[RMDB]
The data come from the RNA Mapping Database (RMDB), library OK1LIB. Structure probing data (2A3 and DMS) for a 177-nucleotide construct. DMS (dimethyl sulfate) methylates the pairing face of unpaired adenines and cytosines. For 2A3, 1,015 sequencing reads were counted. The RNA was probed in 150 mM KOAc, 10 mM MgCl2 and 150 mM bicine (pH 8.5) at 24 C.
RNA sequence: GGGAACGACUCGAGUAGAGUCGAAAACACGAAGGUUGGCUAAUCCUGGUCGGACAUCAGGAGGUUAGUGCAUUGGCAUAAGCCACCUUGGCGCUAAUAGAUACUAAUCGUAGCAUAGCUGAAUAAAAGUGAUCCCGUAUUUCGAUACGGGAUCACUAAAAGAAACAACAACAACAAC
Reactivity to 2A3 in 0.01 (KOAc 150mM, MgCl2 10mM, bicine 150mM(pH8.5), 24C), signal-to-noise 2, nucleotides 027 to 126: c090a000c010g020a060a090g050g040u100u040g000g010c000u000a050a000u000c000c000u000g010g010u060c040g140g110a050c070a150u030c000a000g000g040a000g000g020u020u060a000g010u010g010c020a040u100u120g080g000c000a030u110a230a060g000c000c000a050c000c060u060u090g060g000c000g000c000u050a020a020u030a130g120a060u050a030c010u060a050a020u060c000g020u050a050g070c030a080u110a000g010c030u050g040a090a010u230a090a040a010
Reactivity to DMS in 0.01 (KOAc 150mM, MgCl2 10mM, bicine 150mM(pH8.5), 24C), signal-to-noise 2, nucleotides 027 to 126: c060a010c130g040a120a060g030g020u040u000g000g000c030u000a030a300u000c000c000u040g000g000u000c230g000g030a300c040a000u010c000a000g060g030a050g020g010u000u000a000g000u000g000c020a150u000u000g000g000c000a180u000a070a220g000c010c000a040c160c170u070u010g000g080c060g020c050u000a000a000u040a020g000a150u010a060c000u000a100a090u000c060g000u010a000g000c100a080u030a000g080c050u000g000a110a060u060a060a040a070